[RMDB]
RNA sequence: GGGAACGACUCGAGUAGAGUCGAAAAGUAUGCGGAAUACCGAACAGCCAUUGCAUACACUCGGUGACCAGCGGGGUAGCCAGACCGAGGCUGGUGCCCAUCGCGAAGAUCAGCGCCACCAGGUAGACCUACCCUCACCGUUCGCGGUGAGGGUAGGAAAAGAAACAACAACAACAAC
Reactivity to DMS in 0.01 (KOAc 150mM, MgCl2 10mM, bicine 150mM(pH8.5), 24C), signal-to-noise 1, nucleotides 027 to 126: g000u050a040u000g000c000g040g020a080a230u000a050c080c090g000a030a110c100a100g000c050c000a160u040u070g000c000a000u000a130c080a160c020u010c010g030g010u000g000a170c040c060a160g020c000g010g030g030g040u000a010g020c030c060a010g000a150c040c080g000a250g010g030c100u000g000g000u000g000c000c030c170a080u000c160g000c030g030a050a080g000a060u000c150a010g000c060g000c080c060a090c050c040a050g000g020u010a100g000a120
Reactivity to 2A3 in 0.01 (KOAc 150mM, MgCl2 10mM, bicine 150mM(pH8.5), 24C), signal-to-noise 3, nucleotides 027 to 126: g000u030a000u080g030c060g000g150a080a140u130a230c080c050g070a070a060c050a010g050c000c000a060u110u190g040c000a020u000a010c020a030c110u060c010g020g020u040g070a040c000c030a000g030c000g050g000g000g020u010a030g050c000c000a070g010a260c010c040g040a080g080g000c000u000g000g060u010g000c040c000c020a060u130c040g030c000g050a000a030g020a150u060c030a020g000c000g000c010c000a060c000c020a070g000g030u040a020g070a080

The record gives the reactivity of an RNA of 177 nucleotides to DMS and 2A3. The DMS profile rests on 1,236 reads.